[RMDB]
RNA sequence: GGGAACGACUCGAGUAGAGUCGAAAACGGACGGGAUUUUAGCCCGGUUGCAGGUUUACCCAUUUCGUGCUGGGUCCUGGACCCAAUUAAGAUAAUAGAAAUAUUAUCGAUUUCUUUACCGUCCGGACGCUAAUUACUCAUUCGUGAGUAAUUAGCGAAAAGAAACAACAACAACAAC
Reactivity to 2A3 in 0.01 (KOAc 150mM, MgCl2 10mM, bicine 150mM(pH8.5), 24C), signal-to-noise 1, nucleotides 027 to 126: c010g000g020a000c000g000g030g050a090u000u120u090u300a060g030c000c040c010g000g030u020u090g160c010a020g010g150u150u250u290a060c000c000c000a000u110u200u160c190g050u200g020c010u030g010g000g000u000c000c010u040g000g030a010c000c000c000a030a030u150u060a110a020g000a010u020a010a040u030a010g000a010a100a010u060a020u050u000a000u010c000g010a000u000u150u080c040u100u090u050a070c000c010g000u000c030c000g000g010a010
Reactivity to DMS in 0.01 (KOAc 150mM, MgCl2 10mM, bicine 150mM(pH8.5), 24C), signal-to-noise 3, nucleotides 027 to 126: c020g000g010a010c010g010g000g010a130u010u010u010u010a120g010c120c080c080g010g000u000u000g000c020a010g000g010u030u010u020a050c010c000c000a050u000u010u020c200g010u010g010c300u000g000g010g010u010c000c000u000g010g000a020c010c020c160a040a080u010u010a100a230g000a010u000a010a020u000a010g000a130a100a150u000a000u000u000a000u000c000g000a150u000u000u000c080u000u000u000a140c000c000g010u000c010c000g010g010a120
This 177-nucleotide RNA was probed chemically with 2A3 and DMS. Source: RMDB library OK2TRN, as collected in RNAgym. For 2A3 the reverse transcriptase was SuperScript II with manganese. Values cover nucleotides 27 to 126. DMS adducts were read by reverse transcription with MarathonRT.